[RMDB]
RNA sequence: GGGAACGACUCGAGUAGAGUCGAAAACAUCGUUCAUGGUCGCCCGGACGAAGUGUACGUGAAGAUUAGCAACUCGCACGUCUUCAACCAUAAGCGCCUCCAGAUGCACACGACUGUGAGUGAACGCGCACCUGCUGCGAUUCGUCGCAGCAGGUGCAAAAGAAACAACAACAACAAC
Reactivity to 2A3 in 0.01 (KOAc 150mM, MgCl2 10mM, bicine 150mM(pH8.5), 24C), signal-to-noise 2, nucleotides 027 to 126: c000a120u090c020g000u000u000c030a080u030g070g020u080c000g000c010c010c000g040g020a000c010g020a110a040g090u070g050u100a020c040g000u010g010a020a010g000a100u050u080a020g090c070a090a220c090u010c120g050c090a030c110g000u010c020u000u000c030a020a090c010c020a070u060a110a080g000c020g000c010c000u000c010c010a010g030a060u150g080c040a060c000a000c070g030a030c070u080g010u000g050a020g020u020g000a070a080c060g010c000

Conditions: 150 mM KOAc, 10 mM MgCl2 and 150 mM bicine (pH 8.5), 24 C. An RNA of 177 nucleotides, treated with 2A3 and read out base by base. For 2A3 the reverse transcriptase was SuperScript II with manganese.